RNA sequence: GGGAACGACUCGAGUAGAGUCGAAAAGCAUCUUGCUUCGGCAAGAUGCAAAUAACGGUCAGUGCUUGCAGCUAGUCGUAAUUGCUAACUGGCCUUACGCUAAAACGAAUGCGUUCGCGCAUUCGAAGUCUUAUUAACUCUUCGGAGUUAAUAAGACAAAAGAAACAACAACAACAAC
Reactivity to DMS in 0.01 (KOAc 150mM, MgCl2 10mM, bicine 150mM(pH8.5), 24C), signal-to-noise 7, nucleotides 027 to 126: g000c000a000u000c010u000u000g010c000u000u010c220g020g020c000a010a010g020a010u000g010c010a010a030a050u010a060a070c240g020g010u000c010a010g010u000g010c140u000u000g000c020a030g020c080u000a080g000u020c240g010u010a040a050u000u000g000c000u000a090a020c010u000g010g000c000c010u000u000a040c120g010c130u000a040a070a130a160c010g010a010a000u000g000c000g010u010u020c230g010c010g000c000a000u000u000c000g000a040a060
Reactivity to 2A3 in 0.01 (KOAc 150mM, MgCl2 10mM, bicine 150mM(pH8.5), 24C), signal-to-noise 9, nucleotides 027 to 126: g000c000a010u010c000u010u010g010c010u030u040c150g070g000c000a000a000g000a000u000g000c000a000a000a000u030a030a010c040g000g000u010c000a000g010u020g080c080u110u110g030c030a030g020c030u130a040g160u160c070g090u070a070a090u100u040g000c010u020a050a040c000u010g010g010c000c000u000u040a060c060g020c060u130a040a030a050a060c010g000a010a000u010g020c010g010u020u030c280g000c000g000c040a000u000u010c000g000a030a000